[RMDB]
RNA sequence: GGGAACGACUCGAGUAGAGUCGAAAAAAUGGACGCAUGAACCAGGAAUUCCUAGUAGUCGCGUGUCACUAACGGGCGACGACUGCGUCCCUGUUCUUUGUACACACCGCCCGUCGUUAUCUAAGAUCCAAUAGGACGUAUUCGUACGUCCUAUUGGAAAAGAAACAACAACAACAAC
Reactivity to DMS in 0.01 (KOAc 150mM, MgCl2 10mM, bicine 150mM(pH8.5), 24C), signal-to-noise 3, nucleotides 027 to 126: a050a040u010g000g000a030c030g010c030a060u010g000a120a100c080c020a060g000g020a180a110u010u020c010c010u000a020g020u000a030g000u030c030g010c040g000u010g030u010c140a100c160u030a100a080c140g000g020g020c040g000a100c000g000a090c080u010g000c020g010u000c020c040c130u000g000u010u000c050u010u000u000g010u020a080c080a050c100a100c070c010g010c020c000c050g000u000c060g010u010u000a060u010c060u000a080a080g000a150u000
Reactivity to 2A3 in 0.01 (KOAc 150mM, MgCl2 10mM, bicine 150mM(pH8.5), 24C), signal-to-noise 6, nucleotides 027 to 126: a000a000u130g020g010a030c040g010c030a040u100g030a040a040c020c010a030g040g020a030a100u160u150c010c010u010a040g020u020a020g000u020c020g010c150g110u050g070u070c070a060c210u160a160a050c070g010g020g040c020g010a050c000g010a010c010u040g000c030g010u020c000c000c010u020g020u050u000c010u040u080u090g060u040a020c050a000c010a030c050c040g020c000c020c030g030u040c020g020u050u030a080u130c070u050a070a080g040a170u000